[RMDB]
RNA sequence: GGGAACGACUCGAGUAGAGUCGAAAAAAAAGCAAUUGAAGCAGGUGUGGUUGGUAAACCAUUAGUAGCACGUGUACAAGCGAUGCGUAGGCGUAAAGUACCUGGGUGGGGCGUUUUUACCAAUAAACUCAUGUCAAUCGUUCGCGAUUGACAUGAGAAAAGAAACAACAACAACAAC
Reactivity to 2A3 in 0.01 (KOAc 150mM, MgCl2 10mM, bicine 150mM(pH8.5), 24C), signal-to-noise 1, nucleotides 027 to 126: a000a000a000a000g050c060a050a070u100u050g030a140a000g000c030a060g000g040u020g000u050g090g030u000u020g060g110u130a020a050a050c040c000a050u090u000a020g000u020a020g000c010a000c050g040u010g020u210a120c130a130a010g000c020g100a090u030g050c000g030u050a020g040g000c000g000u030a030a030a030g060u000a000c000c000u010g000g000g000u120g000g100g000g000c050g110u000u000u150u000u000a030c010c020a000a010u140a090a120a000
Reactivity to DMS in 0.01 (KOAc 150mM, MgCl2 10mM, bicine 150mM(pH8.5), 24C), signal-to-noise 2, nucleotides 027 to 126: a010a020a010a070g000c070a150a050u030u020g060a040a050g010c050a160g000g020u000g000u010g000g020u000u000g050g000u010a050a040a040c150c070a110u050u020a090g000u080a090g010c030a000c030g000u010g010u060a050c080a200a130g000c030g000a060u000g030c000g000u000a000g000g060c080g000u010a090a020a100g060u040a040c030c090u010g000g000g020u020g000g010g000g020c030g010u000u030u000u000u000a090c030c020a050a050u080a080a140a080